[RMDB]
RNA sequence: GGGAACGACUCGAGUAGAGUCGAAAAUUACGGUUAGAUGUCCGCACAACUCCGGACUCGCGGUGAGCGAUACAGCGCAGCGCGAGCAUCGCAGCUGCUGUGCGGACGGCUAGCAAGGGCUAGCCAGCAGGAUAUGCGUCUUCGGACGCAUAUCCUGAAAAGAAACAACAACAACAAC
Reactivity to DMS in 0.01 (KOAc 150mM, MgCl2 10mM, bicine 150mM(pH8.5), 24C), signal-to-noise 2, nucleotides 027 to 126: u080u000a150c150g030g000u060u000a050g040a130u010g000u000c030c000g040c000a020c000a010a040c000u000c200c000g000g000a220c010u010c000g000c010g000g000u000g020a100g000c080g010a190u010a060c300a050g020c030g000c000a000g010c020g010c000g000a000g000c080a060u020c030g010c270a160g000c150u010g000c050u000g000u000g020c000g000g000a010c000g000g080c000u000a000g000c030a300a110g010g040g000c030u000a010g010c000c000a180g000
Reactivity to 2A3 in 0.01 (KOAc 150mM, MgCl2 10mM, bicine 150mM(pH8.5), 24C), signal-to-noise 2, nucleotides 027 to 126: u250u140a040c000g000g080u110u210a100g010a100u190g040u010c000c000g080c000a010c000a000a150c010u010c020c020g000g000a010c000u030c000g000c000g070g070u030g010a010g020c000g050a180u070a300c160a020g030c000g010c040a040g120c000g030c000g010a000g030c100a190u080c000g000c010a020g000c030u180g000c050u010g000u020g050c000g000g010a000c020g000g000c000u020a000g000c000a100a290g170g130g050c000u000a000g000c000c000a000g030